[RMDB]
RNA sequence: GGGAACGACUCGAGUAGAGUCGAAAAAGUCUACUUUUCGAAGUAGACUGUGCUCCCACUUGAUCGAGGUCUCACCGUGUCAUUCCCCACGACACUCGGGCGUAAUAGAUUGGUUCGCCAAUCUAAAUUAUUAGAGUUUGUUCGCAAACUCUAAUAAAAAAGAAACAACAACAACAAC
Reactivity to DMS in 0.01 (KOAc 150mM, MgCl2 10mM, bicine 150mM(pH8.5), 24C), signal-to-noise 6, nucleotides 027 to 126: a010g000u000c000u000a000c000u000u010u000u010c140g010a020a010g010u000a010g010a010c000u000g010u010g020c160u000c000c000c000a140c160u000u010g000a070u010c050g000a070g000g020u000c030u000c050a090c070c040g010u000g010u000c030a210u000u010c010c010c010c060a140c110g000a060c070a060c030u000c070g020g000g000c050g010u000a110a140u000a010g000a020u000u000g010g010u000u010c230g010c000c000a000a010u000c000u000a020a070a130
Reactivity to 2A3 in 0.01 (KOAc 150mM, MgCl2 10mM, bicine 150mM(pH8.5), 24C), signal-to-noise 2, nucleotides 027 to 126: a000g010u000c010u000a000c000u070u040u030u130c190g070a020a000g000u010a000g010a010c000u000g010u060g020c030u010c010c010c010a030c050u080u190g070a140u080c070g030a050g010g110u040c010u020c030a060c030c050g040u010g010u060c020a060u070u100c000c010c020c000a020c010g030a000c010a000c000u020c010g040g010g000c000g010u030a080a080u020a070g010a020u010u010g000g030u030u050c170g010c050c000a010a000u000c000u010a000a040a040